[RMDB]
RNA sequence: GGGAACGACUCGAGUAGAGUCGAAAAGUGCCUGGAGGCAGAGUAGCCAUGUUGAGACCACAGGAAAAAAAGUCUUGCUGGGCACGGUGGCUCACGCCUGUAAUCCCACCACUUUGGGAGGCUGAGGAUCACCUCCUGGAUUCGUCCAGGAGGUGAUAAAAGAAACAACAACAACAAC
Reactivity to DMS in 0.01 (KOAc 150mM, MgCl2 10mM, bicine 150mM(pH8.5), 24C), signal-to-noise 4, nucleotides 027 to 126: g010u010g000c000c010u010g020g000a050g010g040c020a130g040a090g040u060a120g030c000c000a060u010g000u030u020g000a150g000a090c040c030a060c090a060g000g000a010a010a040a110a090a090a090g010u030c010u000u010g000c140u010g030g000g040c020a070c020g020g020u000g000g000c010u020c030a030c130g010c000c000u000g000u010a130a130u010c010c000c010a200c080c040a040c180u040u070u000g000g000g000a040g010g000c060u000g000a090g000g010
Reactivity to 2A3 in 0.01 (KOAc 150mM, MgCl2 10mM, bicine 150mM(pH8.5), 24C), signal-to-noise 3, nucleotides 027 to 126: g030u010g010c010c010u010g040g010a040g030g030c030a020g020a030g140u110a000g020c010c010a080u130g060u090u140g180a120g090a070c020c020a040c070a070g030g000a040a000a020a040a000a050a050g040u000c000u020u070g020c030u050g040g010g010c010a010c020g010g030u040g050g000c010u010c010a030c100g020c000c000u010g070u090a050a070u000c010c010c000a010c000c010a080c050u150u150u090g000g000g000a040g010g000c010u020g040a030g040g000

Conditions: 150 mM KOAc, 10 mM MgCl2 and 150 mM bicine (pH 8.5), 24 C. An RNA of 177 nucleotides, treated with DMS and 2A3 and read out base by base. For 2A3, 2,499 sequencing reads were counted. Values cover nucleotides 27 to 126.